About this RNA:
Source: RMDB library OK1LIB, as collected in RNAgym. The record gives the reactivity of an RNA of 177 nucleotides to 2A3 and DMS.
RNA sequence: GGGAACGACUCGAGUAGAGUCGAAAAGUGAUGACUUCUACUGCAACACAGACCAAGUGCAAGGACCGUCGAUCCGGUGGUGACGGACACUGCCAGCACUGUUACCAGAGCCAGGUGGAGCAGUUGAUGAUGGACUCCUGUUCGCAGGAGUCCAUCAAAAAGAAACAACAACAACAAC
Reactivity to 2A3 in 0.01 (KOAc 150mM, MgCl2 10mM, bicine 150mM(pH8.5), 24C), signal-to-noise 2, nucleotides 027 to 126: g150u040g020a090u100g050a100c050u120u010c070u080a020c000u020g060c050a160a030c020a020c010a000g030a040c060c040a130a010g010u020g030c050a100a070g080g020a060c000c040g100u050c000g030a060u050c090c020g000g080u110g030g010u030g040a040c000g000g000a020c050a010c030u010g050c060c000a020g070c000a000c000u010g070u120u020a030c000c010a010g020a000g080c030c030a060g030g020u020g010g000a080g060c000a010g000u030u040g020a020
Reactivity to DMS in 0.01 (KOAc 150mM, MgCl2 10mM, bicine 150mM(pH8.5), 24C), signal-to-noise 2, nucleotides 027 to 126: g020u000g000a100u010g000a210c030u000u010c060u000a050c010u000g010c000a020a180c040a000c000a080g000a080c110c040a060a080g000u060g010c020a110a080g000g020a130c000c020g030u000c040g000a130u000c010c050g000g000u010g020g000u000g000a150c070g040g060a140c100a110c060u000g010c030c010a170g010c000a010c000u000g010u030u030a070c190c130a040g010a050g010c040c080a250g020g010u000g000g000a250g000c010a000g040u000u000g000a150
The DMS profile rests on 2,101 reads. For 2A3 the reverse transcriptase was SuperScript II with manganese. The reactions ran in a buffer of 150 mM KOAc, 10 mM MgCl2 and 150 mM bicine (pH 8.5), at 24 C.